Conditions: 150 mM KOAc, 10 mM MgCl2 and 150 mM bicine (pH 8.5), 24 C. Chemical mapping of a 177-nucleotide RNA with 2A3 and DMS. For DMS the reverse transcriptase was MarathonRT. The data come from the RNA Mapping Database (RMDB), library M2PK90. For DMS, 2,216 sequencing reads were counted.
RNA sequence: GGGAACGACUCGAGUAGAGUCGAAAAAGCAACGAGUGUGUGUGGGACGUUUAAUCCCAAGCUCUGAGUAGAGCACGCGCUCACACACACCGCGAGCGAGCAUCAGCAGAGCGCAAACGCUGGUAAAUGUGUUACAACGUUUCGACGUUGUAACACAAAAAGAAACAACAACAACAAC
Reactivity to 2A3 in 0.01 (KOAc 150mM, MgCl2 10mM, bicine 150mM(pH8.5), 24C), signal-to-noise 1, nucleotides 027 to 126: a000g070c050a060a010c030g000a080g090u030g010u010g000u000g010u000g000g000g050a010c000g000u020u040u160a060a030u060c000c000c030a000a000g010c010u000c020u090g300a260g130u300a010g180a000g000c030a000c030g010c000g000c000u000c010a010c030a010c000a000c000a000c000c000g020c000g020a020g030c000g010a030g000c020a000u040c000a010g030c000a020g020a060g100c100g000c070a050a090a000c070g010c020u000g000g030u020a060a100a080
Reactivity to DMS in 0.01 (KOAc 150mM, MgCl2 10mM, bicine 150mM(pH8.5), 24C), signal-to-noise 3, nucleotides 027 to 126: a060g020c020a170a090c020g000a240g020u000g020u010g010u000g010u000g000g000g000a090c010g010u000u000u000a090a120u010c010c030c020a060a090g000c000u010c000u000g020a160g040u010a080g000a030g000c000a090c080g010c050g010c000u010c000a010c000a000c010a000c020a010c000c020g030c020g010a270g000c020g000a130g020c080a030u000c030a060g010c020a090g000a110g000c070g020c100a050a070a130c140g010c030u000g000g000u000a040a060a060